[RMDB]
RNA sequence: GGGAACGACUCGAGUAGAGUCGAAAAGACCUUACAGGACACAUGCUUGACAGUUAUUCUGUCAUGCUAUGUGGUGAUAAUUCUGCUAAGUUUUGGGAAGAGGCAUUCUAUAGAGAUCUCUAUAGUUAAAGUAGUACGUUCGCGUACUACAAAAGAAACAACAACAACAAC
Reactivity to DMS in 0.01 (KOAc 150mM, MgCl2 10mM, bicine 150mM(pH8.5), 24C), signal-to-noise 8, nucleotides 027 to 129: g010a060c080c020u000u000a080c050a050g020g020a100c020a010c000a010u020g000c020u000u000g010a030c000a040g030u010u000a090u050u050c010u010g000u010c010a020u000g000c030u010a000u000g030u010g010g020u060g040a120u000a060a130u080u030c020u000g030c170u000a030a020g020u000u000u010u000g000g010g040a050a060g010a010g050g000c100a090u020u010c020u020a010u010a000g000a070g020a120u030c060u030c020u010a000u020a030g010u020u030a020a060a090
Reactivity to 2A3 in 0.01 (KOAc 150mM, MgCl2 10mM, bicine 150mM(pH8.5), 24C), signal-to-noise 9, nucleotides 027 to 129: g030a010c010c000u010u050a030c030a040g020g060a010c000a000c010a010u020g000c010u010u020g000a000c000a000g050u130u080a200u300u200c010u000g000u000c000a000u010g000c010u120a010u000g000u010g000g040u020g060a040u080a150a080u080u020c020u040g040c080u040a060a040g030u020u030u150u170g080g000g000a060a040g010a060g040g020c020a010u100u000c020u010a020u000a030g050a050g040a180u060c060u000c010u140a010u000a030g040u030u160a120a050a020
The record gives the reactivity of an RNA of 170 nucleotides to DMS and 2A3. The RNA was probed in 150 mM KOAc, 10 mM MgCl2 and 150 mM bicine (pH 8.5) at 24 C. For 2A3, 29,793 sequencing reads were counted. For DMS the reverse transcriptase was MarathonRT. It was measured as part of the RMDB library 15KLIB.